[RMDB]
RNA sequence: GGGAACGACUCGAGUAGAGUCGAAAAGGACUGCGCAGUCCGGCAACAUCAGCAGAGAGCCCGCUAUACGUGACGGAUUGGCUGAAGCGUACAGAAAUAUUGAGCCUCCUGCAUGAGGCAGCCAAGCAAAACGUACGUGAGUUCGCUCACGUACGAAGUACCGUUAAUACUUCGGUAUUAACGGUACAAAAGAAACAACAACAACAAC
Reactivity to 2A3 in 0.01 (KOAc 150mM, MgCl2 10mM, bicine 150mM(pH8.5), 24C), signal-to-noise 6, nucleotides 027 to 156: g030g010a020c040u060g050c180g030c160a020g010u000c000c000g000g030c010a050a030c020a110u090c030a010g040c050a010g080a010g000a030g090c030c040c030g000c020u040a040u020a070c040g030u060g030a020c040g050g040a130u060u090g080g020c020u020g030a060a010g010c010g020u020a020c020a030g140a090a160a010u300a140u200u200g050a060g000c000c010u010c000c040u070g030c070a130u100g000a020g010g020c000a000g020c000c000a030a020g010c050a040a070a080a060c020g000u000a000c000g000u000g000a010g000u030u170c230g020c100u000c000a000c000g000u000a000c000g010a010a000
Reactivity to DMS in 0.01 (KOAc 150mM, MgCl2 10mM, bicine 150mM(pH8.5), 24C), signal-to-noise 2, nucleotides 027 to 156: g040g020a030c030u000g020c030g020c130a060g000u030c010c000g010g040c040a060a120c070a110u000c020a090g010c040a100g010a120g000a100g020c030c000c020g010c030u000a080u000a050c080g080u000g010a300c020g010g000a270u000u010g030g010c000u000g020a050a300g000c010g040u000a070c030a040g000a090a040a180u010a290u010u000g020a060g030c010c020u010c000c020u040g020c080a080u000g010a070g000g000c060a050g000c030c010a020a080g040c070a090a030a060a160c000g010u000a000c000g020u000g010a030g050u010u000c300g000c010u000c000a000c020g000u000a000c000g000a010a090